Structure probing data (DMS and 2A3) for a 207-nucleotide construct. Values are in units of 0.01, from 0 to 300, in steps of 10. The RNA was probed in 150 mM KOAc, 10 mM MgCl2 and 150 mM bicine (pH 8.5) at 24 C. The data come from the RNA Mapping Database (RMDB), library M2RFPK. The DMS profile rests on 4,428 reads.
RNA sequence: GGGAACGACUCGAGUAGAGUCGAAAAUAAUAUGAUUAAGAAAUCAAACAAGAUUUCUGAGACAAACACGCUUCACAAUGUGCGGCAAAGAAACAUUGUUUAUGCAAAGGCACUUCGCAAUGUGUGCAAAAUCUCCUGACCUUCGGGUCAGGAGAAACAUAAUCACCCUGUUCGCAGGGUGAUUAUGAAAAGAAACAACAACAACAAC
Reactivity to DMS in 0.01 (KOAc 150mM, MgCl2 10mM, bicine 150mM(pH8.5), 24C), signal-to-noise 2, nucleotides 027 to 156: u010a080a080u010a140u000g000a130u000u000a130a060g000a010a010a000u000c000a060a160a210c190a220a190g000a030u000u000u000c010u000g000a230g020a120c070a120a140a110c070a040c010g040c000u020u010c050a080c000a020a040u010g050u000g040c050g020g000c040a130a020a070g010a040a050a020c020a030u000u020g030u000u010u000a080u000g000c060a020a110a160g020g030c070a060c080u000u020c100g020c060a140a160u000g010u000g000u010g020c000a070a050a080a140u000c000u000c000c000u010g000a020c000c010u000u010c300g050g070g030u000c000a010g020g000a020g000a010a050a060
Reactivity to 2A3 in 0.01 (KOAc 150mM, MgCl2 10mM, bicine 150mM(pH8.5), 24C), signal-to-noise 3, nucleotides 027 to 156: u130a020a060u110a060u170g010a030u080u100a050a030g010a010a000a010u010c030a050a100a280c040a160a130g000a000u000u000u010c020u010g020a050g020a070c050a010a130a010c050a010c040g000c000u000u000c000a000c000a000a020u010g000u010g000c000g040g060c100a190a120a060g080a030a070a000c000a000u000u020g060u060u080u100a110u100g060c030a060a050a070g100g000c010a010c020u080u090c140g000c070a120a140u110g030u000g010u010g050c030a000a040a020a140u010c000u000c000c010u010g000a000c000c000u030u060c250g110g000g000u010c000a000g000g000a000g000a000a000a000